Structure probing data (2A3 and DMS) for a 177-nucleotide construct.
It was measured as part of the RMDB library M2PK50.
For DMS the reverse transcriptase was MarathonRT.
The RNA was probed in 150 mM KOAc, 10 mM MgCl2 and 150 mM bicine (pH 8.5) at 24 C.
For 2A3 the reverse transcriptase was SuperScript II with manganese.
RNA sequence: GGGAACGACUCGAGUAGAGUCGAAAAUCAUCUAUGUUCGCAUAGAUGAACACAGCCUUGUACUUUUAGUGGACUUUAGGCUAAAGAAUUUCACUAGAAAAAUAAUCGGGUGUUUCGACACCCGAAACUCUUUCCUAUCUUUCGAGAUAGGAAAGAGAAAAGAAACAACAACAACAAC
Reactivity to 2A3 in 0.01 (KOAc 150mM, MgCl2 10mM, bicine 150mM(pH8.5), 24C), signal-to-noise 3, nucleotides 027 to 126: u000c000a000u000c000u000a020u020g020u020u040c180g010c070a000u000a010g020a010u010g010a050a010c110a000c000a000g070c010c010u100u160g160u230a180c060u000u100u030u060a020g010u020g030g000a000c010u030u000u060a130g140g130c110u160a060a110a080g020a020a070u000u060u080c000a000c000u010a000g060a010a060a060a070a070u230a030a130u030c000g020g030g010u020g010u000u110u090c110g020a000c000a000c000c000c000g000a000a000a000
Reactivity to DMS in 0.01 (KOAc 150mM, MgCl2 10mM, bicine 150mM(pH8.5), 24C), signal-to-noise 2, nucleotides 027 to 126: u000c010a010u000c000u000a000u010g010u010u020c160g010c010a010u000a010g000a010u000g000a010a050c080a110c140a240g010c040c020u010u000g050u020a090c160u000u000u000u000a020g030u010g000g010a000c040u010u000u000a080g030g010c220u020a050a090a060g010a080a070u000u000u000c010a020c010u000a000g000a010a010a110a130a140u000a060a070u000c000g000g000g020u000g010u000u000u020c140g010a050c000a000c000c000c000g000a000a030a050